[RMDB]
RNA sequence: GGGAACGACUCGAGUAGAGUCGAAAAACCUUUGUGCUUUGUCAGAAUACGCGGAGCAUGCUGAUCCCAUUGGGAUCAGAACUACAUGAACCUGUAUUCUUGGAUUUAAGCACUCUGGUAAAAGCGCAAAACAGAGGUUCGCCUCUGUUUUGCGCAAGCAACAUGCAAUGUUCGCAUUGCAUGUUGCAAAAGAAACAACAACAACAAC
Reactivity to 2A3 in 0.01 (KOAc 150mM, MgCl2 10mM, bicine 150mM(pH8.5), 24C), signal-to-noise 2, nucleotides 027 to 156: a000c000c000u030u000u010g000u010g000c020u040u010u020g000u010c000a010g030a000a010u010a000c050g080c210g100g000a030g020c000a000u020g000c000u000g000a000u000c000c030c130a300u220u300g000g010g000a000u000c020a000g000a030a070c130u230a040c010a000u000g020a050a070c010c010u040g000u000a010u020u000c010u010u080g090g010a050u280u250u150a000a000g010c000a000c000u010c010u000g000g000u040a110a100a070a050g000c010g010c000a010a020a000a020c000a000g000a010g030g040u130u230c270g140c010c000u000c000u010g000u000u000u000u000g000c000g020c010a020a000
Structure probing data (2A3) for a 207-nucleotide construct. The reactions ran in a buffer of 150 mM KOAc, 10 mM MgCl2 and 150 mM bicine (pH 8.5), at 24 C. The data come from the RNA Mapping Database (RMDB), library RNAMAK.